Structure probing data (DMS and 2A3) for a 177-nucleotide construct. Conditions: 150 mM KOAc, 10 mM MgCl2 and 150 mM bicine (pH 8.5), 24 C. Source: RMDB library OK2TRN, as collected in RNAgym. The 2A3 profile rests on 1,135 reads.
[RMDB]
RNA sequence: GGGAACGACUCGAGUAGAGUCGAAAAGUAAGUACGAAGGACAAACUGUAACAGUACUUUGUGAAGGUAGUAGUAAAAAAGAUGAUCAGGUUCUUGCUGGCUACACUGAUAAAAAUAAGCUAGUUAAUGAAUAGGUCAGAUUCGUCUGACCUAUUCAAAAAGAAACAACAACAACAAC
Reactivity to DMS in 0.01 (KOAc 150mM, MgCl2 10mM, bicine 150mM(pH8.5), 24C), signal-to-noise 4, nucleotides 027 to 126: g010u010a030a050g010u000a040c030g000a170a110g000g010a080c050a130a100a110c140u000g000u000a020a090c050a140g010u000a030c020u000u000u000g020u000g010a110a090g010g030u010a050g000u010a030g010u010a000a040a040a080a040a060g010a070u000g000a140u000c070a040g010g000u000u000c020u000u000g000c070u000g020g010c010u000a060c120a050c070u000g010a100u010a000a050a040a050a060u010a060a050g010c030u000a050g010u000u020a080a130
Reactivity to 2A3 in 0.01 (KOAc 150mM, MgCl2 10mM, bicine 150mM(pH8.5), 24C), signal-to-noise 2, nucleotides 027 to 126: g070u040a040a000g010u000a000c030g110a170a060g090g010a020c020a020a270a070c170u160g010u150a080a010c000a040g000u020a050c000u070u060u020g030u030g120a090a070g070g020u070a010g030u000a000g030u130a090a040a040a060a030a070g070a060u100g010a030u110c040a050g150g000u080u000c030u080u060g020c040u010g020g040c000u070a020c060a040c060u050g100a120u160a130a130a030a010a030u190a070a000g020c040u060a000g020u050u060a130a050